[RMDB]
RNA sequence: GGGAACGACUCGAGUAGAGUCGAAAAGGGGUCUAAGAAAGCGUCGAAGAACGCUAAGACAUGAACUGAAGCCUCCACGGUUCAACAGCUUAGCGGGAGACGCUUCUUAGACGGAGGCACCCAAAGAGCUGACCAGAGUUCGCUCUGGUCAGCUCAACCUAUGUAGUCGUUUCGACGACUACAUAGGAAAAGAAACAACAACAACAAC
Reactivity to 2A3 in 0.01 (KOAc 150mM, MgCl2 10mM, bicine 150mM(pH8.5), 24C), signal-to-noise 2, nucleotides 027 to 156: g130g000g010g000u000c000u000a000a010g030a030a150a020g010c000g000u000c010g100a180a030g000a010a000c010g010c000u000a000a000g000a030c100a200u180g010a010a020c000u020g030a120a000g020c000c000u000c010c010a040c020g020g000u020u010c050a090a050c040a130g160c010u010u000a000g010c000g010g000g000a030g000a000c010g000c010u020u000c000u000u000a000g000a000c010g000g000a000g000g000c010a020c000c000c000a050a110a050g000a000g000c000u000g000a010c010c000a000g000a000g070u110u170c210g060c070u000c000u000g000g000u000c000a000g000c000u000c000a000a000